[RMDB]
RNA sequence: GGGAACGACUCGAGUAGAGUCGAAAAAUCUCAGACCCAGUGACGAAGACGAAGGAGAAUACAUCGGGAAAGAGAGACUCUAGAACUAAUCCAUACACUGUAUUCAGCCAGCAUAAAGCCUCACAUCUCGUUACUUACCAUUCGUGGUAAGUAACGAAAAAGAAACAACAACAACAAC
Reactivity to 2A3 in 0.01 (KOAc 150mM, MgCl2 10mM, bicine 150mM(pH8.5), 24C), signal-to-noise 2, nucleotides 027 to 126: a000u020c000u000c010a020g030a050c040c010c000a020g040u030g030a050c040g070a090a050g030a040c040g050a120a070g040g040a040g040a050a010u090a080c040a080u070c070g010g000g090a030a130a000g080a010g000a010g020a010c020u040c020u070a020g020a130a010c030u060a130a010u030c030c000a010u040a100c050a010c100u040g010u040a060u040u020c000a020g030c030c010a010g040c000a020u060a090a070a020g060c010c010u040c030a040c000a080u070c040
Reactivity to DMS in 0.01 (KOAc 150mM, MgCl2 10mM, bicine 150mM(pH8.5), 24C), signal-to-noise 3, nucleotides 027 to 126: a100u000c020u000c020a140g020a300c040c010c000a070g010u000g030a110c060g000a150a070g020a100c090g010a090a140g000g020a140g000a140a050u000a060c050a070u000c060g010g000g000a040a130a110g000a080g010a090g010a080c040u000c100u000a030g010a070a060c070u010a050a140u010c030c020a040u010a100c090a060c090u000g000u000a050u000u000c050a120g010c030c020a040g000c050a090u000a030a060a130g010c020c020u000c040a080c140a120u000c090
Chemical mapping of a 177-nucleotide RNA with 2A3 and DMS. For DMS, 1,608 sequencing reads were counted. DMS adducts were read by reverse transcription with MarathonRT. Source: RMDB library OK2TST, as collected in RNAgym. Values cover nucleotides 27 to 126.